An RNA of 207 nucleotides, treated with 2A3 and DMS and read out base by base. The RNA was probed in 150 mM KOAc, 10 mM MgCl2 and 150 mM bicine (pH 8.5) at 24 C. The 2A3 profile rests on 5,120 reads. For DMS, 8,143 sequencing reads were counted. Reactivities are given for positions 27 through 156. For 2A3 the reverse transcriptase was SuperScript II with manganese.
RNA sequence: GGGAACGACUCGAGUAGAGUCGAAAAAUUGUGUGAGUCUUGUCAAUGAAUAGAACAUCAAACUCAGUAGCAUGCCUCUGACAAUGUGAUGUGUCAAGAAAAGUGUAUUAGUUAUAUAUUGCAAACUACCAUAAACCUAUCAGCUUAAAGCAACACAUACUAAUUUAAUGUUCGCAUUAAAUUAGUAAAAAGAAACAACAACAACAAC
Reactivity to 2A3 in 0.01 (KOAc 150mM, MgCl2 10mM, bicine 150mM(pH8.5), 24C), signal-to-noise 6, nucleotides 027 to 156: a000u090u070g030u010g020u020g030a040g020u010c040u090u050g040u080c050a030a080u080g050a100a060u110a150g060a060a030c020a040u050c040a030a030a060c100u010c040a010g030u100a020g020c050a050u110g030c020c000u000c020u020g010a010c030a050a080u060g030u020g060a040u080g030u010g060u040c030a030a040g070a050a130a020a020g060u070g020u050a120u150u040a040g010u060u000a050u020a050u010a030u200u060g010c020a040a010a040c020u020a050c000c030a050u080a060a070a040c020c010u060a120u140c040a020g050c010u050u160a090a070a030g030c020a060a040c050a010c020a080
Reactivity to DMS in 0.01 (KOAc 150mM, MgCl2 10mM, bicine 150mM(pH8.5), 24C), signal-to-noise 4, nucleotides 027 to 156: a130u000u000g020u010g030u000g000a100g010u000c010u000u000g030u000c030a090a150u000g000a110a140u000a130g020a090a080c030a040u010c010a060a080a080c040u000c020a050g020u000a070g030c050a090u000g020c080c030u000c020u000g010a040c050a040a100u000g030u000g030a090u000g020u000g000u000c030a060a160g000a070a100a060a120g030u010g010u000a080u000u000a070g010u000u000a100u000a120u000a100u010u000g020c050a070a090a070c030u010a040c030c030a100u000a040a050a060c040c050u010a070u000c060a080g010c040u000u000a040a080a110g010c050a040a050c050a060c070a220